[RMDB]
RNA sequence: GGGAACGACUCGAGUAGAGUCGAAAAGUGCAAGCUCAGGGUACUGGUUCAAAUGCUGACAUGCUCCAACAUGGCAAUAAUUUACUUGUGUACGUUGCUAGCUACAAUGAGGUUGAUCAAUUGUCGAACAUCAGUAGUGUUUCGACACUACUGAUGUAAAAGAAACAACAACAACAAC
Reactivity to 2A3 in 0.01 (KOAc 150mM, MgCl2 10mM, bicine 150mM(pH8.5), 24C), signal-to-noise 4, nucleotides 027 to 126: g080u070g040c020a010a030g010c020u040c060a020g080g000g000u030a040c030u040g050g000u060u090c060a050a060a090u090g010c020u020g030a020c010a050u050g020c010u000c030c010a070a070c000a060u040g020g000c020a010a040u130a100a100u060u100u060a050c040u110u060g050u020g000u100a070c070g130u040u060g060c030u050a020g030c010u030a010c020a020a060u120g020a020g060g100u040u110g030a060u060c040a070a130u080u060g100u100c030g030a040
Reactivity to DMS in 0.01 (KOAc 150mM, MgCl2 10mM, bicine 150mM(pH8.5), 24C), signal-to-noise 6, nucleotides 027 to 126: g020u010g010c050a060a060g010c030u000c020a070g000g010g020u000a040c040u010g000g000u000u010c100a030a060a090u010g020c090u000g010a070c060a060u000g000c040u000c120c110a090a170c070a050u000g000g010c020a030a050u010a080a060u000u000u000a040c040u000u000g020u000g010u000a060c100g010u000u010g000c030u000a050g000c070u000a060c060a030a070u010g010a080g000g010u000u000g000a080u000c080a050a100u000u000g030u000c060g000a120

An RNA of 177 nucleotides, treated with 2A3 and DMS and read out base by base. The data come from the RNA Mapping Database (RMDB), library OK2TRN. In probing experiments dimethyl sulfate is read out at A N1 and C N3, which are open when not base-paired. 2A3 adducts were read by reverse transcription with SuperScript II with manganese. The RNA was probed in 150 mM KOAc, 10 mM MgCl2 and 150 mM bicine (pH 8.5) at 24 C. For DMS, 10,350 sequencing reads were counted.